[RMDB]
RNA sequence: GGGAACGACUCGAGUAGAGUCGAAAACACAAAAAGCUGAUGCUGCCGGAGAGGUCAUCCGUCAGUAUUUCAGGAGUAAAUUCGACAUUAUUCAGAAAGACGACCUCAGUCCAGUAAACAAACAAAACAUGUCGUACGUCUUCGGACGUACGACAUGAAAAGAAACAACAACAACAAC
Reactivity to 2A3 in 0.01 (KOAc 150mM, MgCl2 10mM, bicine 150mM(pH8.5), 24C), signal-to-noise 1, nucleotides 027 to 126: c190a070c080a130a080a000a010a010g080c000u050g000a070u080g000c000u020g030c070c000g000g000a010g000a000g110g200u080c060a110u000c000c000g000u000c000a000g000u000a020u000u160u000c010a030g000g060a010g120u110a000a130a060u040u000c040g000a020c020a080u060u050a150u080u120c050a080g150a040a070a000g110a000c000g020a020c000c000u060c010a000g000u030c010c000a000g040u040a070a060a010c020a010a160a000c010a000a000a020a000
The record gives the reactivity of an RNA of 177 nucleotides to 2A3. Conditions: 150 mM KOAc, 10 mM MgCl2 and 150 mM bicine (pH 8.5), 24 C.